Conditions: 150 mM KOAc, 10 mM MgCl2 and 150 mM bicine (pH 8.5), 24 C. Chemical mapping of a 177-nucleotide RNA with DMS and 2A3. It was measured as part of the RMDB library OK1LIB. Reactivities are given for positions 27 through 126. DMS adducts were read by reverse transcription with MarathonRT. For 2A3 the reverse transcriptase was SuperScript II with manganese.

[RMDB]
RNA sequence: GGGAACGACUCGAGUAGAGUCGAAAAAACUGUUAUGUAUUUACUAGUUAACGAAGGUGAAUUAUCAACAUUUGGACCUAAAGGUCGUUUUGGUGGAUUAGUUUACGAUACAUUAGGAUUCAAUGCAGUUCAAAAGUGAGUUCGCUCACUUUUGAACAAAAGAAACAACAACAACAAC
Reactivity to DMS in 0.01 (KOAc 150mM, MgCl2 10mM, bicine 150mM(pH8.5), 24C), signal-to-noise 2, nucleotides 027 to 126: a080a000c060u020g040u030u000a040u010g030u000a010u020u010u000a030c020u010a060g000u000u030a150a080c170g010a020a040g000g050u010g020a080a030u020u000a060u000c100a030a060c020a050u030u000u000g020g000a000c000c000u020a070a080a100g030g000u010c000g000u010u000u010u000g040g060u020g000g010a070u020u010a060g000u010u000u000a010c000g000a050u010a040c070a090u000u010a020g000g000a090u030u000c020a000a050u020g000c090a090
Reactivity to 2A3 in 0.01 (KOAc 150mM, MgCl2 10mM, bicine 150mM(pH8.5), 24C), signal-to-noise 3, nucleotides 027 to 126: a000a000c090u090g030u090u060a130u230g030u000a020u050u050u020a030c020u050a020g210u130u070a300a030c090g090a180a080g030g030u190g020a070a040u160u000a070u150c110a000a040c020a070u050u060u060g040g040a000c010c000u010a050a060a030g070g000u050c040g030u010u020u040u100g130g020u050g090g010a090u040u050a060g110u120u110u150a020c020g000a010u020a180c030a070u030u060a080g010g020a030u000u020c000a020a040u020g130c020a040